RNA sequence: GGGAACGACUCGAGUAGAGUCGAAAAAGUGGUAUGGAGCCGGAAAGAGGCAGCGAGUUAAGAAGGCUGCAAAGGAAGACAGGACCCCCUCACCUGUCGAGCGGUCCCUCAGCCCCAGGGAACUCGCCCUCUAAUGCAAGUUCGCUUGCAUUAGAGGAAAAGAAACAACAACAACAAC
Reactivity to 2A3 in 0.01 (KOAc 150mM, MgCl2 10mM, bicine 150mM(pH8.5), 24C), signal-to-noise 1, nucleotides 027 to 126: a000g100u070g020g010u070a140u180g060g090a000g040c010c020g000g070a240a070a040g100a080g010g030c000a000g000c020g020a030g030u120u160a130a090g000a070a030g110g030c010u000g080c110a120a000a040g070g040a070a080g000a000c000a000g020g020a070c010c020c050c010c040u010c000a030c000c000u000g000u020c000g000a030g000c040g030g000u070c040c000c020u040c040a040g070c000c000c000c000a010g020g020g020a030a020c020u060c030g020c020
Reactivity to DMS in 0.01 (KOAc 150mM, MgCl2 10mM, bicine 150mM(pH8.5), 24C), signal-to-noise 3, nucleotides 027 to 126: a030g030u020g010g010u020a060u010g020g000a110g030c050c040g000g020a080a050a110g010a110g010g020c110a080g010c040g010a060g010u010u010a050a090g020a180a150g010g010c010u000g000c240a040a090a120g010g010a120a110g000a000c010a010g000g000a140c040c030c010c010c000u000c070a230c020c000u010g010u000c010g000a090g010c080g010g010u010c020c010c040u010c050a060g000c000c000c020c050a080g000g000g010a050a010c010u010c030g000c060